[RMDB]
RNA sequence: GGGAACGACUCGAGUAGAGUCGAAAAGAUAUGGAUGGCGGUGGGUGGUGCAACAGCAAGGCUCGGAAACGAGCCUUGACAUGCACGCCACACCAUCCUAAGUCAAAAUCACUACUUCGGUAGUGAAGUAAUUAGCAUUGUUCGCAAUGCUAAUUACAAAAGAAACAACAACAACAAC
Reactivity to DMS in 0.01 (KOAc 150mM, MgCl2 10mM, bicine 150mM(pH8.5), 24C), signal-to-noise 6, nucleotides 027 to 126: g000a040u000a300u010g000g010a000u000g030g010c070g020g040u010g010g030g030u010g050g060u000g010c010a020a090c300a150g000c020a000a010g000g000c000u000c000g010g000a080a100a260c010g010a010g000c010c000u000u000g000a020c100a210u000g010c020a000c000g000c000c000a010c010a090c000c000a010u000c000c010u000a040a130g010u000c050a090a070a110a200u000c000a010c000u000a000c000u000u010c230g030g000u000a010g020u000g000a000a110
Reactivity to 2A3 in 0.01 (KOAc 150mM, MgCl2 10mM, bicine 150mM(pH8.5), 24C), signal-to-noise 8, nucleotides 027 to 126: g020a020u090a040u150g010g020a000u020g020g160c300g130g190u140g080g160g300u300g280g070u020g010c020a130a120c020a180g070c000a010a000g010g000c000u000c010g030g050a050a080a050c020g010a000g000c000c000u000u000g010a010c000a000u010g000c000a010c020g000c000c000a020c000a000c010c000a000u000c000c000u000a120a010g030u000c030a000a020a030a300u060c000a000c000u020a000c010u030u070c270g140g010u010a010g000u010g010a040a020
Chemical mapping of a 177-nucleotide RNA with DMS and 2A3. The DMS profile rests on 9,295 reads. 2A3 is a SHAPE reagent: it acylates the 2'-hydroxyl of flexible nucleotides of all four kinds. Reactivities are rounded to 0.1 and cut off at 0 and 3. Conditions: 150 mM KOAc, 10 mM MgCl2 and 150 mM bicine (pH 8.5), 24 C.